[RMDB]
RNA sequence: GGGAACGACUCGAGUAGAGUCGAAAACGUGCUGGACAGGAGGGUGGAUUUGAGAUCAAAGACUCGGCGAAGUGGAUCGGCCCAUUAGCACCCAUGUUUAAGGGCUACAAAGGCAUGGCUGGUGUGGAAGCAAUGGUCACCAUGUUGCAGCAGGUGCUAGUCGUAAAUAUUUCGAUAUUUACGACUAAAAAGAAACAACAACAACAAC
Reactivity to DMS in 0.01 (KOAc 150mM, MgCl2 10mM, bicine 150mM(pH8.5), 24C), signal-to-noise 4, nucleotides 027 to 156: c060g020u000g020c010u000g010g000a120c090a120g020g000a100g020g020g020u000g010g010a130u000u010u010g010a150g020a050u010c020a100a080a190g010a070c020u000c020g040g010c070g010a080a150g030u010g010g010a060u000c050g010g010c000c000c010a120u000u000a120g010c040a080c050c020c030a090u000g010u010u010u000a100a100g010g010g000c010u000a070c070a070a120a100g030g030c040a070u000g000g010c040u010g020g020u000g010u000g010g010a090a080g020c050a050a070u000g000g000u010c020a080c020c020a140u000g000u010u000g010c030a050g000c040a080g010g010u010g010c090
Reactivity to 2A3 in 0.01 (KOAc 150mM, MgCl2 10mM, bicine 150mM(pH8.5), 24C), signal-to-noise 4, nucleotides 027 to 156: c050g010u050g010c020u060g010g030a040c010a070g030g040a050g030g050g040u090g030g030a080u070u070u190g060a080g010a030u090c060a070a080a040g040a060c020u020c050g020g000c070g050a070a020g010u050g020g040a060u080c040g050g020c020c000c000a060u050u050a020g020c000a060c010c010c030a060u060g080u020u100u050a090a080g000g000g000c010u030a040c070a050a110a010g040g000c040a020u030g040g000c030u020g000g050u040g000u040g020g040a070a000g000c030a040a050u070g000g030u070c030a030c050c000a060u070g010u030u070g030c030a040g000c010a030g000g050u020g010c010